This 177-nucleotide RNA was probed chemically with 2A3 and DMS.

[RMDB]
RNA sequence: GGGAACGACUCGAGUAGAGUCGAAAAGACUAGGUUCGCCUAGUCAAAAAGGUGAUGAGCACUCUCGAACCUGACGGGCAGGAUGAUGAGCGGAUUCCUGGCUGAUAAAGCGCAACUUCGGUUGCGCCGUAGUCCAUUUGUUCGCAAAUGGACUACGAAAAGAAACAACAACAACAAC
Reactivity to 2A3 in 0.01 (KOAc 150mM, MgCl2 10mM, bicine 150mM(pH8.5), 24C), signal-to-noise 4, nucleotides 027 to 126: g000a010c000u000a000g000g020u050u050c080g090c030c000u000a000g010u000c010a010a020a010a010a040g070g010u070g020a170u130g000a030g030c080a050c130u180c000u010c040g020a040a040c000c020u040g030a030c040g020g010g020c010a000g030g010a020u060g020a020u100g050a050g110c070g010g040a010u020u030c000c000u050g090g030c010u050g040a110u140a140a100a020g000c000g000c000a000a010c010u050u080c180g100g000u000u010g000c010g000c000
Reactivity to DMS in 0.01 (KOAc 150mM, MgCl2 10mM, bicine 150mM(pH8.5), 24C), signal-to-noise 4, nucleotides 027 to 126: g000a040c000u000a010g010g010u000u000c270g020c000c010u000a000g020u000c010a030a050a060a110a060g020g010u000g010a140u000g000a080g010c160a120c230u010c020u000c020g010a110a060c020c020u010g010a200c100g000g000g010c020a020g000g000a050u000g010a160u010g010a100g040c090g010g000a160u000u000c020c000u000g010g000c050u000g000a100u020a030a090a110g010c000g010c000a000a000c000u000u010c200g020g000u000u000g010c000g000c000

The 2A3 profile rests on 7,510 reads.
2A3 adducts were read by reverse transcription with SuperScript II with manganese.
DMS adducts were read by reverse transcription with MarathonRT.
It was measured as part of the RMDB library RFMREP.